[RMDB]
RNA sequence: GGGAACGACUCGAGUAGAGUCGAAAACCUGUUGACUUCGGUCAACAGGAAAAGGUGGAUGCUACGGUACCGAAGUAGCAAAAGUGCAGAAGGAACGCACAAAAACUUAUCCGUUCGCGGAUAAGAACUUCCACUGUAGUUUCGACUACAGUGGAAGAAAAGAAACAACAACAACAAC
Reactivity to DMS in 0.01 (KOAc 150mM, MgCl2 10mM, bicine 150mM(pH8.5), 24C), signal-to-noise 2, nucleotides 027 to 126: c000c000u020g000u000u000g000a010c000u010u020c110g060g020u000c000a020a000c000a000g000g010a020a110a090a140g000g030u010g010g020a120u000g010c060u010a020c000g000g000u000a120c090c060g000a070a120g030u000a020g000c020a030a060a020a120g020u000g040c010a100g010a130a130g000g010a080a090c110g000c080a030c020a140a060a070a070a150c010u000u000a000u000c000c010g020u010u000c180g090c000g000g000a020u010a010a000g000a080a170
Reactivity to 2A3 in 0.01 (KOAc 150mM, MgCl2 10mM, bicine 150mM(pH8.5), 24C), signal-to-noise 2, nucleotides 027 to 126: c000c000u010g000u000u000g010a000c000u030u030c210g130g000u000c010a000a000c000a000g000g070a020a070a000a030g110g040u120g010g060a090u070g000c000u000a010c020g070g170u060a050c040c060g110a100a020g000u010a020g000c000a040a020a000a000g020u010g000c030a010g040a290a070g200g050a160a030c090g000c030a000c000a020a050a040a000a000c000u010u000a010u000c010c000g030u010u040c290g000c010g060g000a000u010a010a000g000a020a040